This 177-nucleotide RNA was probed chemically with 2A3 and DMS. The data come from the RNA Mapping Database (RMDB), library TTRINS. 2A3 adducts were read by reverse transcription with SuperScript II with manganese. For 2A3, 4,186 sequencing reads were counted. The reactions ran in a buffer of 150 mM KOAc, 10 mM MgCl2 and 150 mM bicine (pH 8.5), at 24 C.
RNA sequence: GGGAACGACUCGAGUAGAGUCGAAAAGAUAUGGAGGUCACGUAACACUGAUGACCACAUGGUCACAGUUCGUCGGAAACGACGAAUCACAGCCAUGUGCAAGGUGGAGAAGUGACCUCCUAAGUCAGCAUUAGUAAACCUUCGGGUUUACUAAUGCAAAAGAAACAACAACAACAAC
Reactivity to 2A3 in 0.01 (KOAc 150mM, MgCl2 10mM, bicine 150mM(pH8.5), 24C), signal-to-noise 2, nucleotides 027 to 126: g060a040u120a070u150g010g010a000g000g020u010c000a000c010g030u060a150a030c000a000c020u130g120a300u120g030a300c060c000a000c000a000u010g050g000u210c050a020c030a100g040u010u000c010g000u000c000g000g080a020a050a080c000g000a010c000g000a000a000u090c020a040c070a010g030c010c000a000u000g010u000g030c020a140a300g000g010u000g000g040a030g040a090a000g000u010g010a000c000c000u000c000c000u000a000a000g000u020c040a020
Reactivity to DMS in 0.01 (KOAc 150mM, MgCl2 10mM, bicine 150mM(pH8.5), 24C), signal-to-noise 3, nucleotides 027 to 126: g040a040u000a300u050g000g060a000g030g000u000c000a040c010g010u000a160a300c010a010c010u040g010a150u000g020a130c300c000a010c000a000u010g000g000u050c090a210c300a300g010u000u000c000g000u000c010g030g000a110a080a140c030g020a000c000g000a000a000u010c100a150c300a290g000c000c000a000u000g010u000g000c030a030a070g040g000u010g010g010a040g010a190a240g040u010g000a010c000c000u000c000c000u000a010a050g000u000c050a170